Chemical mapping of a 177-nucleotide RNA with DMS and 2A3. For DMS, 4,888 sequencing reads were counted. For 2A3 the reverse transcriptase was SuperScript II with manganese. The data come from the RNA Mapping Database (RMDB), library OK2TST.
[RMDB]
RNA sequence: GGGAACGACUCGAGUAGAGUCGAAAAGAGGAAUUAGCACACACAACCUGAAGCCAGAGACCAGGGACCUCUCUUCUGUACUGCGACCAGCAAGACAGCUGAUCCUCAUGGAGCCAUCUGUGCUCUCAUCAACGAAUCUUUUCGAAGAUUCGUUGAUAAAAGAAACAACAACAACAAC
Reactivity to DMS in 0.01 (KOAc 150mM, MgCl2 10mM, bicine 150mM(pH8.5), 24C), signal-to-noise 6, nucleotides 027 to 126: g010a090g010g000a100a090u010u000a070g020c030a120c100a080c100a070c120a090a100c060c030u000g020a120a090g010c060c090a060g000a090g010a060c070c030a050g010g010g010a100c070c030u000c040u000c040u010u010c030u000g000u010a060c070u000g000c050g000a100c160c080a080g000c030a030a070g010a050c130a050g020c040u000g000a050u000c010c020u000c080a120u000g010g000a030g010c020c020a120u000c130u000g000u010g030c020u000c040u010c180
Reactivity to 2A3 in 0.01 (KOAc 150mM, MgCl2 10mM, bicine 150mM(pH8.5), 24C), signal-to-noise 4, nucleotides 027 to 126: g060a010g020g050a090a120u080u050a070g020c030a020c000a010c000a000c010a100a090c010c030u020g040a050a010g050c030c000a030g020a010g010a080c010c020a040g050g000g040a040c000c020u030c000u010c000u090u000c000u030g060u030a100c020u040g010c020g090a120c060c000a010g010c020a020a030g070a060c030a030g000c000u020g010a030u020c000c000u050c020a080u120g030g010a000g000c020c000a110u100c140u140g100u150g010c010u000c000u020c000